The data come from the RNA Mapping Database (RMDB), library OK1LIB. Chemical mapping of a 177-nucleotide RNA with 2A3 and DMS.
[RMDB]
RNA sequence: GGGAACGACUCGAGUAGAGUCGAAAACUAUGGUGAGGCCCUAUCUAGUAUAGCAAUCCACCAAGCAGGUGAGUUCACACAAUUCAGGUUCUCAGAGAAAAUGCGCCCUGACUUGACAGGUAUGGUCAUAUCGGUCCGAUUUCGAUCGGACCGAUAUAAAAGAAACAACAACAACAAC
Reactivity to 2A3 in 0.01 (KOAc 150mM, MgCl2 10mM, bicine 150mM(pH8.5), 24C), signal-to-noise 1, nucleotides 027 to 126: c000u040a070u210g080g000u010g060a070g030g000c030c000c000u030a030u000c020u000a000g100u270a090u000a100g080c010a000a110u040c000c020a030c020c000a060a010g090c030a030g020g020u050g120a060g000u040u110c020a020c000a010c030a100a010u090u010c020a030g050g000u170u010c000u020c040a020g000a000g010a300a000a040a070u230g010c040g000c050c000c020u000g050a030c040u000u030g000a000c000a010g010g020u050a050u100g020g030u000c010
Reactivity to DMS in 0.01 (KOAc 150mM, MgCl2 10mM, bicine 150mM(pH8.5), 24C), signal-to-noise 2, nucleotides 027 to 126: c020u000a130u040g000g000u000g000a010g000g060c300c210c000u000a080u000c040u040a090g000u030a120u000a050g000c070a130a060u010c080c000a010c000c150a070a080g020c130a070g010g000u060g000a130g000u000u000c010a130c040a080c200a050a040u000u020c110a030g000g000u000u000c000u000c000a040g000a090g020a010a050a030a030u040g010c060g010c210c000c020u000g010a030c010u020u010g000a120c080a020g000g000u000a030u040g020g010u000c150
The RNA was probed in 150 mM KOAc, 10 mM MgCl2 and 150 mM bicine (pH 8.5) at 24 C.